[RMDB]
RNA sequence: GGGAACGACUCGAGUAGAGUCGAAAAGGCUCAGGACGAACGCUGGCGGCGUGCCUAAUACAUGCAAGUAGAACGCUGAGGACUGGUGCUUGCACCGGUCCAAGGAGUUGCGAACGGGUGAGUAACGUACGCCCAUACAUUUCGAUGUAUGGGCGUAAAAAGAAACAACAACAACAAC
Reactivity to DMS in 0.01 (KOAc 150mM, MgCl2 10mM, bicine 150mM(pH8.5), 24C), signal-to-noise 3, nucleotides 027 to 126: g000g010c030u000c050a100g020g010a100c100g020a080a100c110g000c020u000g010g010c050g020g010c040g000u000g020c000c020u000a080a050u010a130c110a040u000g030c080a040a080g000u000a080g000a070a030c040g000c020u010g000a300g000g010a030c000u010g000g020u000g000c020u040u010g000c010a010c000c010g000g010u000c000c000a000a130g000g000a030g000u000u000g010c000g000a100a130c080g010g000g000u000g000a110g010u000a060a060c230g010
Reactivity to 2A3 in 0.01 (KOAc 150mM, MgCl2 10mM, bicine 150mM(pH8.5), 24C), signal-to-noise 1, nucleotides 027 to 126: g060g020c010u010c050a030g020g010a070c040g040a100a050c030g000c010u030g060g010c000g030g010c070g030u090g030c010c010u050a060a020u120a100c050a020u110g240c060a070a000g020u000a030g040a030a010c040g000c030u000g030a040g030g020a000c000u000g000g000u030g010c040u090u110g010c000a010c000c020g010g000u030c000c010a000a010g000g000a040g000u060u020g140c020g000a030a000c000g020g060g000u050g060a070g030u050a060a010c050g050

Notes
The record gives the reactivity of an RNA of 177 nucleotides to DMS and 2A3. DMS adducts were read by reverse transcription with MarathonRT. The 2A3 profile rests on 1,592 reads. The reactions ran in a buffer of 150 mM KOAc, 10 mM MgCl2 and 150 mM bicine (pH 8.5), at 24 C. The data come from the RNA Mapping Database (RMDB), library OK2TRN.